[RMDB]
An RNA of 177 nucleotides, treated with 2A3 and DMS and read out base by base.
Values cover nucleotides 27 to 126.
DMS adducts were read by reverse transcription with MarathonRT.
RNA sequence: GGGAACGACUCGAGUAGAGUCGAAAAGGACAGUCGUCAGUAGUUCGACGUGAGCAGAAGCCCACCUCGAGAUGCUACGUGGACGAGGGCAUGCCCAAGACACACCUUAACCCUAGCGGGGGUCGCUACCGUAUGCUUAGUUCGCUAAGCAUACGGUAAAAGAAACAACAACAACAAC
Reactivity to 2A3 in 0.01 (KOAc 150mM, MgCl2 10mM, bicine 150mM(pH8.5), 24C), signal-to-noise 2, nucleotides 027 to 126: g040g050a020c040a120g090u040c030g000u020c020a020g010u030a020g030u050u040c000g000a000c000g020u000g000a000g000c010a050g060a300a010g020c000c000c000a020c000c000u010c000g070a090g060a190u240g000c010u010a050c120g300u110g140g000a030c030g010a050g000g010g000c050a050u120g010c020c000c010a000a030g120a010c050a000c020a060c030c020u000u120a070a040c010c000c000u000a020g040c120g000g030g030g050g040u020c040g000c060u020
Reactivity to DMS in 0.01 (KOAc 150mM, MgCl2 10mM, bicine 150mM(pH8.5), 24C), signal-to-noise 1, nucleotides 027 to 126: g010g000a040c090a090g010u000c040g000u000c010a080g000u000a030g040u010u000c010g010a020c170g000u000g020a040g000c000a180g020a160a130g030c000c000c010a020c010c010u020c010g020a060g010a110u040g020c000u000a020c010g010u000g000g000a000c040g020a060g020g000g020c070a080u010g000c000c000c030a150a080g010a100c080a050c070a040c010c010u000u030a120a150c050c020c000u000a050g040c190g000g020g000g000g040u000c040g020c080u000